RNA sequence: GGGAACGACUCGAGUAGAGUCGAAAAGAUAUGGAUCGGUACCCAGCGUUGAAAGAUAGGUUCAGCUGUUUAUCGGAAACGAUAAACAGCUGAACCUAUCUGGAGCUGCGUACACGAUCCUAAGUCAGUUAAUUAUGGGGUUCGCCCCAUAAUUAACAAAAGAAACAACAACAACAAC
Reactivity to DMS in 0.01 (KOAc 150mM, MgCl2 10mM, bicine 150mM(pH8.5), 24C), signal-to-noise 2, nucleotides 027 to 126: g010a050u000a300u010g000g000a010u000c010g000g010u000a020c000c120c010a010g030c000g010u030u010g000a200a220a020g000a010u000a000g000g020u000u010c030a010g000c000u000g030u010u000u000a000u000c000g030g010a170a100a220c000g030a020u010a020a000a010c000a020g040c000u000g000a000a000c000c000u000a000u000c000u000g000g000a060g000c000u000g010c300g000u000a000c000a060c000g000a000u000c000c010u000a010a100g000u000c070a110